[RMDB]
RNA sequence: GGGAACGACUCGAGUAGAGUCGAAAAUUAAUACGCGGUCUCUAAUACGUUGAAUUGGUUGCGGACCUUUAUUAUAAAGCAACUCGAGCACUGCAAAUUCAGUAAUAUUUAAGCCAUAUCGCUUUACUAGUAACAACAGAUUCGUCUGUUGUUACUAAAAAGAAACAACAACAACAAC
Reactivity to DMS in 0.01 (KOAc 150mM, MgCl2 10mM, bicine 150mM(pH8.5), 24C), signal-to-noise 4, nucleotides 027 to 126: u010u010a070a080u020a100c160g030c060g020g020u000c020u010c080u000a040a100u010a030c090g010u010u010g010a100a090u000u010g010g020u000u000g030c120g000g010a100c160c040u010u000u010a030u010u010a110u010a070a070a090g020c040a060a050c040u000c150g000a080g000c050a040c070u010g020c080a060a050a070u000u000c070a030g010u010a080a100u000a060u010u010u000a100a080g010c050c070a050u010a070u010c130g010c030u000u000u000a080c170
Reactivity to 2A3 in 0.01 (KOAc 150mM, MgCl2 10mM, bicine 150mM(pH8.5), 24C), signal-to-noise 2, nucleotides 027 to 126: u070u030a030a050u070a060c060g000c040g090g020u000c040u000c010u070a100a080u050a140c040g020u030u040g090a110a100u140u120g070g020u050u080g060c020g090g000a030c030c060u110u090u020a110u080u080a090u020a010a070a000g030c010a000a030c030u010c050g040a000g000c050a000c060u050g040c020a140a000a030u090u090c020a000g050u070a040a230u040a110u150u160u030a070a000g000c000c010a010u060a020u190c020g000c010u020u070u000a040c080